This 170-nucleotide RNA was probed chemically with 2A3 and DMS. For DMS the reverse transcriptase was MarathonRT.
[RMDB]
RNA sequence: GGGAACGACUCGAGUAGAGUCGAAAAUUAGCCAAGAAGGAGCUUUCAGGCCAGUGCUUUAAAAUACUCUAUAAGGGCAAUGUGACGCAUGAUGCUAGCUCUGCCAUUAAUAGACCACAACUCACAUCAGCAGUGCGCUUCGGCGCACUGAAAAGAAACAACAACAACAAC
Reactivity to 2A3 in 0.01 (KOAc 150mM, MgCl2 10mM, bicine 150mM(pH8.5), 24C), signal-to-noise 3, nucleotides 027 to 129: u070u030a000g040c020c010a000a000g140a030a000g030g010a000g000c080u050u050u070c040a020g050g000c010c000a040g020u020g040c000u140u000u100a040a090a000a020u150a080c030u040c000u010a030u060a140a070g020g030g000c030a030a060u050g010u010g010a040c070g000c040a060u200g010a070u170g110c000u000a000g000c010u000c030u020g000c010c000a020u050u070a040a050u010a010g010a050c000c000a090c030a120a070c030u070c020a060c020a100u000c000a020g060
Reactivity to DMS in 0.01 (KOAc 150mM, MgCl2 10mM, bicine 150mM(pH8.5), 24C), signal-to-noise 4, nucleotides 027 to 129: u130u020a080g050c070c070a120a060g020a040a050g040g010a080g030c050u010u040u020c000a110g010g010c090c050a060g020u000g030c050u000u090u000a040a040a030a100u050a130c050u030c020u070a090u040a130a080g000g030g060c080a060a090u040g020u000g060a120c140g000c070a070u110g030a120u000g050c010u020a190g000c030u050c040u030g000c060c040a050u080u010a050a010u030a040g020a050c140c120a000c210a130a040c060u000c040a080c120a080u070c080a110g040
2A3 adducts were read by reverse transcription with SuperScript II with manganese. The 2A3 profile rests on 5,153 reads. The reactions ran in a buffer of 150 mM KOAc, 10 mM MgCl2 and 150 mM bicine (pH 8.5), at 24 C. High DMS reactivity at an A or C suggests that its Watson-Crick edge is free. The data come from the RNA Mapping Database (RMDB), library 15KLIB.